Conditions: 150 mM KOAc, 10 mM MgCl2 and 150 mM bicine (pH 8.5), 24 C. This 177-nucleotide RNA was probed chemically with 2A3 and DMS. For 2A3 the reverse transcriptase was SuperScript II with manganese. The 2A3 profile rests on 20,098 reads.
[RMDB]
RNA sequence: GGGAACGACUCGAGUAGAGUCGAAAAGGGCUUUGCCCAGAGGAGGCCUUGAGAAGCCAGGCUGGAGUUUGUGGAGAGAGUGUGUGUCACUCACAGGACAUAUGACGCAUUUGCAACAUGCGUUCUCCGUCAUAUACUGUUUCGACAGUAUAUGACGAAAAGAAACAACAACAACAAC
Reactivity to 2A3 in 0.01 (KOAc 150mM, MgCl2 10mM, bicine 150mM(pH8.5), 24C), signal-to-noise 8, nucleotides 027 to 126: g040g000g010c030u140u140u200g020c010c010c020a010g030a030g040g040a030g010g010c020c010u090u060g080a090g020a140a020g030c020c030a020g050g000c040u030g030g010a070g030u120u180u130g050u100g020g010a030g000a010g000a050g040u030g010u040g020u040g040u060c010a020c050u050c010a060c040a030g030g050a010c020a040u130a070u170g030a010c010g010c020a030u040u030u270g030c040a060a040c020a110u060g000c010g000u050u000c020u010c010
Reactivity to DMS in 0.01 (KOAc 150mM, MgCl2 10mM, bicine 150mM(pH8.5), 24C), signal-to-noise 9, nucleotides 027 to 126: g010g010g020c020u000u000u010g010c020c010c020a110g010a100g010g010a100g010g010c030c030u000u000g010a120g010a110a140g010c050c060a060g010g000c030u000g000g010a100g010u000u000u000g020u000g010g010a070g000a100g010a050g020u010g010u000g010u000g000u000c020a070c060u010c120a100c170a130g000g000a040c060a040u000a070u000g000a060c030g010c010a060u000u000u010g010c190a070a080c280a030u000g010c010g010u000u000c050u000c050
For DMS the reverse transcriptase was MarathonRT.
Source: RMDB library OK2TRN, as collected in RNAgym.